[RMDB]
RNA sequence: GGGAACGACUCGAGUAGAGUCGAAAACGGAUUUGUCUCCUCAUGAUGAAGAAAUGGCUGCUGUGGUGCCAGACAUCACCCCCCGACACAUCAGUGUCCAAAGACCAGGAGAGAGAAGCUCCCUGACACAGGCCUGUCUUUAGGGGAAAGAUACCUCUGUCUGUUAACAAUUCGUUGUUAACAGACAAAAAGAAACAACAACAACAAC
Reactivity to 2A3 in 0.01 (KOAc 150mM, MgCl2 10mM, bicine 150mM(pH8.5), 24C), signal-to-noise 2, nucleotides 027 to 156: c010g040g020a050u090u100u110g060u000c050u000c010c030u040c010a040u060g030a060u010g030a000a070g060a110a140a070u070g020g020c030u100g000c020u110g020u030g090g070u020g030c040c090a060g060a060c050a030u080c030a050c010c010c000c000c010c010g000a000c000a000c000a070u290c120a060g000u000g010u000c020c050a070a040a020g030a050c080c040a030g010g020a040g000a010g020a000g020a090a040g060c020u050c020c000c010u030g020a030c020a000c010a130g030g030c000c010u030g010u040c010u020u030u040a020g000g040g000g000a020a000a000g030a000u170a130c000c090u100c040
Reactivity to DMS in 0.01 (KOAc 150mM, MgCl2 10mM, bicine 150mM(pH8.5), 24C), signal-to-noise 2, nucleotides 027 to 156: c050g000g000a140u000u000u010g000u000c030u000c050c020u000c040a160u020g000a150u000g000a040a110g020a040a090a080u000g000g020c000u010g000c050u010g050u010g010g030u000g000c040c050a090g000a080c040a060u010c040a170c010c010c000c010c000c110g010a040c010a030c030a230u010c150a160g000u000g010u010c000c040a030a050a070g000a050c040c050a120g020g000a130g030a130g000a220g000a090a140g000c060u010c000c020c010u000g040a130c030a090c030a100g000g010c020c050u020g000u020c020u000u000u000a060g010g020g040g000a110a070a090g010a160u000a070c040c030u010c060
An RNA of 207 nucleotides, treated with 2A3 and DMS and read out base by base.
DMS adducts were read by reverse transcription with MarathonRT.
Values cover nucleotides 27 to 156.
The reactions ran in a buffer of 150 mM KOAc, 10 mM MgCl2 and 150 mM bicine (pH 8.5), at 24 C.